RNA sequence: GGGAACGACUCGAGUAGAGUCGAAAAGAGCAGGUGGUGUCGGCUGCGGUGCACGCCUACCUGCACGCAGGCGACAGCGCGCCGCCGCGCACGGUGCAGCAGCGGCAGCUAUGCCAGGUGAUGGUCAGCAGGUCGAGCCGUUCGCGGUUCGACCUGCAAAAGAAACAACAACAACAAC
Reactivity to 2A3 in 0.01 (KOAc 150mM, MgCl2 10mM, bicine 150mM(pH8.5), 24C), signal-to-noise 1, nucleotides 027 to 126: g080a020g000c050a070g000g080u050g060g000u020g020u040c000g010g050c000u010g020c000g140g090u120g000c060a000c000g030c000c000u040a060c000c000u010g000c000a020c000g010c000a000g040g000c010g050a020c040a020g010c030g000c080g000c020c000g000c000c000g000c000g010c090a050c170g260g080u170g000c030a060g000c000a000g000c110g010g010c010a010g020c040u050a050u270g020c010c020a020g000g020u080g040a050u080g060g000u120c060a040